[RMDB]
RNA sequence: GGGAACGACUCGAGUAGAGUCGAAAAUCAUCAUGCUGGCUGUACUUAACCUUCUUUUUUGUCCUUGACUUAAAGAAAAUGGAUUAGAUAGCCUAUGCUUAUCUAAAUCAAACAUGAAUAAAUAUGAGAUUUAUCGAGUGUUCGCACUCGAUAAAUCAAAAGAAACAACAACAACAAC
Reactivity to 2A3 in 0.01 (KOAc 150mM, MgCl2 10mM, bicine 150mM(pH8.5), 24C), signal-to-noise 1, nucleotides 027 to 126: u050c000a010u050c010a030u060g050c000u060g050g000c030u050g020u040a120c040u120u050a000a020c010c010u000u100c010u170u150u040u000u020u060g070u000c050c040u060u120g040a020c010u080u060a040a130a020g010a020a020a000a050u120g000g000a030u010u000a000g010a010u010a000g000c000c040u120a070u160g020c010u040u030a040u100c000u020a050a160a060u050c020a070a040a210c010a090u140g100a150a040u240a190a050a120u130a130u120g060a070
Reactivity to DMS in 0.01 (KOAc 150mM, MgCl2 10mM, bicine 150mM(pH8.5), 24C), signal-to-noise 1, nucleotides 027 to 126: u010c040a100u010c040a030u020g010c060u010g010g000c010u000g020u030a100c120u010u030a070a120c060c010u010u000c010u020u000u000u000u000u000g030u000c000c160u000u040g010a030c040u000u010a050a010a100g000a010a030a060a110u000g000g010a030u000u000a030g010a030u000a030g020c010c300u000a080u000g000c030u010u000a010u000c030u000a020a000a040u000c010a080a070a180c060a040u010g000a070a110u000a070a060a020u000a120u010g010a200